[RMDB]
RNA sequence: GGGAACGACUCGAGUAGAGUCGAAAAUAGGCGAUAGCUCGAUUCGUAAGUAAUCGAUUCGAGCUGAAAAGAUAUUUGCGUAUGAACUGAAUAAUACGCAUAUACAUAUUCAGUUGAUCGCUUAAAAGGGUAAUGAUAUCUUCGGAUAUCAUUACCCAAAAGAAACAACAACAACAAC
Reactivity to 2A3 in 0.01 (KOAc 150mM, MgCl2 10mM, bicine 150mM(pH8.5), 24C), signal-to-noise 4, nucleotides 027 to 126: u130a010g000g030c010g000a020u020a060g000c000u000c010g000a000u000u000c010g040u010a090a130g110u060a150a150u170c000g000a000u020u010c000g000a000g000c000u000g020a000a000a000a000g050a020u020a020u020u020u010g000c000g000u020a000u020g070a180a060c140u110g030a070a060u170a120a000u000a010c000g010c000a000u040a000u010a040c010a010u150a080u040u050c010a000g020u060u060g190a010u000c000g000c000u010u020a000a130a010a100
Reactivity to DMS in 0.01 (KOAc 150mM, MgCl2 10mM, bicine 150mM(pH8.5), 24C), signal-to-noise 4, nucleotides 027 to 126: u010a020g000g020c020g000a010u000a060g030c010u000c000g000a000u000u000c000g030u010a070a130g050u040a150a030u010c000g010a020u000u000c030g000a030g000c010u000g000a010a030a150a120g000a180u000a000u000u000u000g010c000g000u010a000u000g000a140a300c300u090g010a070a090u030a170a030u000a000c010g000c000a020u000a000u000a000c160a110u020a110u020u010c020a070g000u050u010g010a040u000c010g000c000u000u000a020a070a090a110